[RMDB]
An RNA of 177 nucleotides, treated with 2A3 and DMS and read out base by base. Reactivities are given for positions 27 through 126. The DMS profile rests on 14,337 reads. Conditions: 150 mM KOAc, 10 mM MgCl2 and 150 mM bicine (pH 8.5), 24 C.

RNA sequence: GGGAACGACUCGAGUAGAGUCGAAAAGAUAUGGACGAGCUUAAUAAAUCGAUGAAAGUUCUCGGAAACGAGAACUGGAGAUUUAUGAAGCGAUGAGUCCUAAGUCAAACGCCUGUUCGCAGGCGAACGAUAGGUAUGAGUUCGCUCAUACCUAUCGAAAAGAAACAACAACAACAAC
Reactivity to 2A3 in 0.01 (KOAc 150mM, MgCl2 10mM, bicine 150mM(pH8.5), 24C), signal-to-noise 5, nucleotides 027 to 126: g000a010u040a020u070g000g000a010c020g020a100g050c010u030u030a060a000u010a010a030a010u020c030g300a300u020g000a020a010a000g000u000u000c000u000c000g020g010a030a030a010c010g000a000g000a000a010c000u000g010g000a000g000a000u000u000u010a020u020g020a010a000g020c000g000a020u120g060a030g000u000c000c000u010a050a010g010u000c030a140a060a110c040g010c000c000u020g040u080u090c300g000c080a000g000g000c010g020a100a030
Reactivity to DMS in 0.01 (KOAc 150mM, MgCl2 10mM, bicine 150mM(pH8.5), 24C), signal-to-noise 7, nucleotides 027 to 126: g000a030u000a120u010g000g000a010c000g010a170g010c000u000u000a120a010u000a000a010a000u000c000g010a120u010g010a140a130a020g000u000u000c000u000c000g000g000a030a030a050c000g010a010g010a000a000c000u000g000g000a020g010a010u000u000u000a000u000g000a070a040g010c000g010a100u010g010a130g010u000c000c000u000a010a100g010u000c020a100a130a200c030g010c000c000u000g000u000u000c190g010c010a010g010g010c010g000a030a050